An RNA of 177 nucleotides, treated with DMS and 2A3 and read out base by base. The 2A3 profile rests on 3,514 reads. Source: RMDB library M2PK50, as collected in RNAgym.

RNA sequence: GGGAACGACUCGAGUAGAGUCGAAAAACCUCCACCUUCGGGUGGAGGUCGUGCGUAGCUGCGUUAAAUUAAUAGCUACGCUUAAUAAAAUUAUUUAACGCAUAAAACUGUGUUUCGACACAGUUAAGUAUUGCACAGAAUUCGUUCUGUGCAAUACAAAAGAAACAACAACAACAAC
Reactivity to DMS in 0.01 (KOAc 150mM, MgCl2 10mM, bicine 150mM(pH8.5), 24C), signal-to-noise 2, nucleotides 027 to 126: a020c000c000u000c000c000a000c010c000u000u000c230g030g040g050u000g000g000a000g000g000u000c030g010u000g010c000g000u000a010g020c010u010g000c000g000u000u010a010a030a090u020u020a120a080u000a040g010c010u000a010c010g000c000u000u000a020a080u010a050a080a090a060u010u000a080u000u000u000a010a010c000g020c020a150u010a070a090a040a020c010u000g010u000g000u000u000u010c150g000a060c010a000c000a010g000u010u000a030a070
Reactivity to 2A3 in 0.01 (KOAc 150mM, MgCl2 10mM, bicine 150mM(pH8.5), 24C), signal-to-noise 3, nucleotides 027 to 126: a000c000c000u000c000c000a010c010c010u010u060c240g150g000g000u020g000g000a000g000g000u000c010g030u030g000c010g010u010a000g000c030u030g000c010g020u000u020a030a040a040u090u130a080a170u110a110g000c000u000a000c000g000c000u000u060a080a010u100a020a050a010a020u100u040a030u050u110u020a020a000c000g000c010a030u200a090a270a020a000c000u000g010u000g020u010u090u070c170g020a010c000a000c000a000g000u020u020a020a010
The reactions ran in a buffer of 150 mM KOAc, 10 mM MgCl2 and 150 mM bicine (pH 8.5), at 24 C.